[RMDB]
RNA sequence: GGGAACGACUCGAGUAGAGUCGAAAAGAACGAUCUAUACUGGCGGGUAUUGAUCGGAAGAACCGCCGAGACUGACGAAACCUAGGUUCGAGGCCCCGAUCCUAGGGAAGGGCCGAAAAGUCAGGAAGGAAUUGAGAAUCUUCGGAUUCUCAAUUCCAAAAGAAACAACAACAACAAC
Reactivity to DMS in 0.01 (KOAc 150mM, MgCl2 10mM, bicine 150mM(pH8.5), 24C), signal-to-noise 3, nucleotides 027 to 126: g020a050a140c000g000a020u010c020u020a020u000a040c000u000g010g010c200g030g000g000u000a010u000u000g040a010u010c000g000g000a060a070g000a160a170c070c020g000c040c040g010a080g000a090c000u010g000a020c040g000a080a080a110c020c000u020a050g000g000u030u000c000g000a150g020g020c050c040c050c010g000a050u000c000c020u000a060g020g000g030a060a060g010g000g000c000c090g000a050a050a050a080g000u010c020a060g030g000a190a090
Reactivity to 2A3 in 0.01 (KOAc 150mM, MgCl2 10mM, bicine 150mM(pH8.5), 24C), signal-to-noise 4, nucleotides 027 to 126: g050a050a030c000g000a010u000c010u030a010u010a010c010u030g220g000c170g110g030g000u000a010u000u070g000a010u010c000g000g010a030a020g040a040a040c020c020g000c000c010g100a070g010a030c010u010g000a000c010g060a100a000a020c020c000u020a030g000g020u010u010c020g000a100g000g090c000c000c000c000g030a030u020c000c010u030a010g000g010g010a030a110g030g030g000c040c030g030a060a050a010a010g020u030c000a000g030g020a020a110
Description: The record gives the reactivity of an RNA of 177 nucleotides to DMS and 2A3. The data come from the RNA Mapping Database (RMDB), library OK1LIB. For DMS, 4,236 sequencing reads were counted. The reactions ran in a buffer of 150 mM KOAc, 10 mM MgCl2 and 150 mM bicine (pH 8.5), at 24 C.